[RMDB]
RNA sequence: GGGAACGACUCGAGUAGAGUCGAAAACGGGGAGGGAAGUACGGGACUGAUCCAGCUCCAGGUCCCAACUCUGAUCCCCACCGACAGGCUGAAGAGGCCGACCUAGUGGCUGUCCCUGCCCCUGUGGCGACGUGCCACUCUUCGGAGUGGCACGUCGAAAAGAAACAACAACAACAAC
Reactivity to 2A3 in 0.01 (KOAc 150mM, MgCl2 10mM, bicine 150mM(pH8.5), 24C), signal-to-noise 1, nucleotides 027 to 126: c020g030g070g000g010a080g080g010g000a070a090g000u100a040c090g000g040g010a000c040u030g020a070u090c120c060a070g050c000u050c070c000a010g000g110u010c000c020c020a000a000c010u000c010u000g050a180u020c040c000c000c000a040c000c050g020a080c000a150g000g110c000u080g060a040a000g080a090g010g000c000c000g000a000c000c000u000a010g000u010g170g010c010u020g010u000c000c000c020u040g040c000c000c010c020u020g010u040g060g010